[RMDB]
RNA sequence: GGGAACGACUCGAGUAGAGUCGAAAACUUACACUGCAUUGUACUAUUAUGCUACAUUCUAUUUUACUAAUGAGCCUGCAUUUAUUAUGCAUGUUUCUUGGUACAUUAUGUUCGGGCCUAUCGUUCCAUCGGUCUAGGUUCGCCUAGACCAAAAGAAACAACAACAACAAC
Reactivity to DMS in 0.01 (KOAc 150mM, MgCl2 10mM, bicine 150mM(pH8.5), 24C), signal-to-noise 8, nucleotides 027 to 129: c060u030u020a000c140a050c140u030g040c000a070u030u030g040u000a030c130u000a080u040u010a030u000g010c000u030a070c090a050u020u020c090u060a100u010u050u020u020a000c070u010a030a050u050g020a000g050c050c000u000g000c030a000u010u040u040a090u090u040a010u010g000c010a030u020g000u010u030u010c040u010u030g000g000u020a050c220a080u000u000a050u000g050u000u000c000g010g010g030c110c010u000a090u000c020g020u000u000c010c020a070u030c100
Reactivity to 2A3 in 0.01 (KOAc 150mM, MgCl2 10mM, bicine 150mM(pH8.5), 24C), signal-to-noise 9, nucleotides 027 to 129: c010u050u070a030c080a030c070u090g010c010a040u050u040g060u080a050c040u090a080u280u050a040u110g030c020u040a040c010a060u030u050c030u120a170u090u160u050u040a060c030u040a020a050u140g000a000g010c000c020u000g000c010a000u030u090u080a250u280u150a010u080g010c010a010u030g020u030u140u020c020u010u010g010g010u030a040c040a110u100u160a080u190g080u040u030c010g010g020g000c010c030u060a050u050c010g060u010u000c010c000a050u080c110

An RNA of 170 nucleotides, treated with DMS and 2A3 and read out base by base. For DMS, 57,435 sequencing reads were counted. The RNA was probed in 150 mM KOAc, 10 mM MgCl2 and 150 mM bicine (pH 8.5) at 24 C.